[RMDB]
RNA sequence: GGGAACGACUCGAGUAGAGUCGAAAACGCGGAUUGAAUGGGAACAUGUGGUGCCGGCUUGGCAAUUUGGUCAUCAGUUGCAAUGCUGGCAACAAGGUGGCCGUAAAAACUGCACUCGUACUAGCCACGGUAUGGACUGAUUCGUCAGUCCAUACCGAAAAGAAACAACAACAACAAC
Reactivity to 2A3 in 0.01 (KOAc 150mM, MgCl2 10mM, bicine 150mM(pH8.5), 24C), signal-to-noise 2, nucleotides 027 to 126: c070g040c090g000g030a100u030u120g040a050a110u090g040g020g040a010a040c010a060u080g020u010g030g010u050g020c000c020g010g010c020u050u090g060g000c020a030a100u120u060u120g000g020u100c020a130u040c010a050g000u000u000g000c010a070a050u130g090c040u100g110g000c010a000a000c010a010a040g020g000u000g020g020c000c000g030u020a040a070a010a000a010c010u030g000c000a010c060u030c020g000u020a120c030u050a080g090c020c040a060
Reactivity to DMS in 0.01 (KOAc 150mM, MgCl2 10mM, bicine 150mM(pH8.5), 24C), signal-to-noise 2, nucleotides 027 to 126: c100g030c020g000g000a100u000u000g020a120a100u000g000g010g020a110a070c080a060u000g020u000g010g010u010g000c030c050g010g000c020u010u000g030g000c040a030a030u000u010u020g010g040u000c150a040u020c040a130g020u000u000g000c000a030a060u000g010c150u010g000g000c000a010a010c020a040a040g020g000u000g000g000c000c050g020u020a000a060a030a050a030c070u000g000c020a110c060u000c070g000u020a060c100u000a110g000c010c060a130